Chemical mapping of a 207-nucleotide RNA with 2A3 and DMS.
Reactivities are rounded to 0.1 and cut off at 0 and 3.
2A3 adducts were read by reverse transcription with SuperScript II with manganese.
It was measured as part of the RMDB library OK3TST.
For DMS the reverse transcriptase was MarathonRT.
The 2A3 profile rests on 2,515 reads.
RNA sequence: GGGAACGACUCGAGUAGAGUCGAAAACGUCAUCUGACACAGGACAAUGAAAUUGGCCACCAUCGUCAGAAACCUGGCGCGCUCCGACAACAGAUGACUAUAAUCCGGCUUCACGGGAAGGGUAUCCGGAUCCAGGACGUCUUUCCAGACCUUGAUAAUGAUAUGCAGGUUUCGACCUGCAUAUCAUAAAAGAAACAACAACAACAAC
Reactivity to 2A3 in 0.01 (KOAc 150mM, MgCl2 10mM, bicine 150mM(pH8.5), 24C), signal-to-noise 4, nucleotides 027 to 156: c040g020u000c000a000u000c000u010g040a050c020a020c050a190g060g000a020c040a060a070u180g110a220a080a160u160u110g050g020c060c000a050c030c000a110u100c030g020u000c010a010g040a130a050a040c050c020u020g000g010c020g000c020g010c040u040c010c020g060a070c030a130a000c000a030g000a030u010g000a000c010u010a010u060a060a020u030c010c010g030g030c020u090u060c070a060c110g080g060g070a020a010g030g050g000u100a070u050c010c000g020g000a030u050c030c050a020g040g020a040c040g040u000c020u080u050u020c020c000a020g020a100c020c010u040u040g040a030u080a280
Reactivity to DMS in 0.01 (KOAc 150mM, MgCl2 10mM, bicine 150mM(pH8.5), 24C), signal-to-noise 2, nucleotides 027 to 156: c110g000u000c010a070u000c020u010g030a140c100a140c230a260g040g000a090c060a090a090u020g000a090a110a300u000u010g030g000c010c010a070c040c040a060u010c030g040u000c060a190g020a150a100a080c060c020u000g020g010c010g010c060g020c030u000c050c000g000a150c040a100a220c010a020g000a060u010g020a060c010u000a170u000a050a070u000c010c000g030g030c070u000u000c050a090c170g000g030g020a060a040g010g030g000u000a070u000c030c000g000g020a130u000c090c080a200g010g000a040c030g010u010c020u010u000u000c040c000a100g000a070c070c020u000u030g000a090u000a100